Source information:
Source: RMDB libraries RFM100 and RFMREP, as collected in RNAgym. The record gives the reactivity of an RNA of 177 nucleotides to DMS and 2A3. The reactions ran in a buffer of 150 mM KOAc, 10 mM MgCl2 and 150 mM bicine (pH 8.5), at 24 C.
RNA sequence: GGGAACGACUCGAGUAGAGUCGAAAACGGACCCUGCCGCACCACGAGGCGCCGUCAACGAGUCGGGUUGUUUGGGAAUGCAGCCCAAAUCGGGCGGUAAACUCCGUCCAAGGCUAAAUACAGGCGAUAAUAGUUUUAUAUUCGUAUAAAACUAUUAAAAAGAAACAACAACAACAAC
Reactivity to DMS in 0.01 (KOAc 150mM, MgCl2 10mM, bicine 150mM(pH8.5), 24C), signal-to-noise 9, nucleotides 027 to 126: c100g010g000a110c040c010c020u010g000c030c020g020c070a100c040c050a070c090g000a080g010g020c100g010c010c020g000u010c040a110a150c050g000a030g010u010c110g010g000g010u000u000g000u000u010u010g010g020g010a110a090u020g010c080a030g020c000c000c030a020a070a070u020c110g010g000g000c000g000g000u010a040a090a140c120u010c000c020g000u000c020c030a090a080g010g000c030u010a050a080a070u020a090c120a090g000g010c070g010a160
Reactivity to 2A3 in 0.01 (KOAc 150mM, MgCl2 10mM, bicine 150mM(pH8.5), 24C), signal-to-noise 9, nucleotides 027 to 126: c030g030g050a050c010c000c020u030g020c010c020g040c040a080c040c010a030c070g020a030g040g010c050g010c010c010g020u020c020a070a070c030g020a010g050u070c040g000g020g010u010u010g020u010u070u080g100g020g020a070a040u080g010c010a010g010c000c000c000a030a030a020u080c010g000g000g000c010g000g000u020a080a030a020c040u010c010c000g010u000c000c010a050a030g040g000c010u060a030a050a020u180a090c070a040g080g010c030g020a010